[RMDB]
RNA sequence: GGGAACGACUCGAGUAGAGUCGAAAAAGCGGCCCUUUCGAGGGCCGCUGAUGGAAAGCCAGGCGAAAGGCAUUUUAUUCCUUGGCUGGCGAAAGCCUAAAAUUCACGCUGCUUUCGAGCAGCGUAAGAUUAGAUGUUGGUUCGCCAACAUCUAAUCAAAAGAAACAACAACAACAAC
Reactivity to DMS in 0.01 (KOAc 150mM, MgCl2 10mM, bicine 150mM(pH8.5), 24C), signal-to-noise 4, nucleotides 027 to 126: a030g010c010g030g010c010c000c000u000u000u010c140g010a010g010g010g040c000c000g010c000u000g010a060u000g000g010a140a060a290g000c000c000a010g010g030c050g000a090a040a010g000g010c300a090u000u010u010u010a130u010u000c000c000u000u000g010g000c020u010g000g010c020g010a060a100a100g000c000c000u010a040a050a080a120u010u000c100a050c010g010c000u000g010c000u000u000u020c160g010a020g010c010a000g000c000g010u000a010a040
Reactivity to 2A3 in 0.01 (KOAc 150mM, MgCl2 10mM, bicine 150mM(pH8.5), 24C), signal-to-noise 2, nucleotides 027 to 126: a010g020c000g000g000c000c000c000u010u020u040c180g080a020g010g000g060c000c020g040c000u000g000a030u040g020g050a060a020a010g000c000c000a030g070g060c050g100a190a010a030g000g010c020a000u120u160u010u160a150u150u010c000c000u020u030g030g050c000u000g000g000c010g060a070a020a000g030c000c010u110a110a090a030a060u210u130c030a000c000g000c010u010g000c000u060u080u140c230g080a010g020c000a010g000c000g000u000a000a010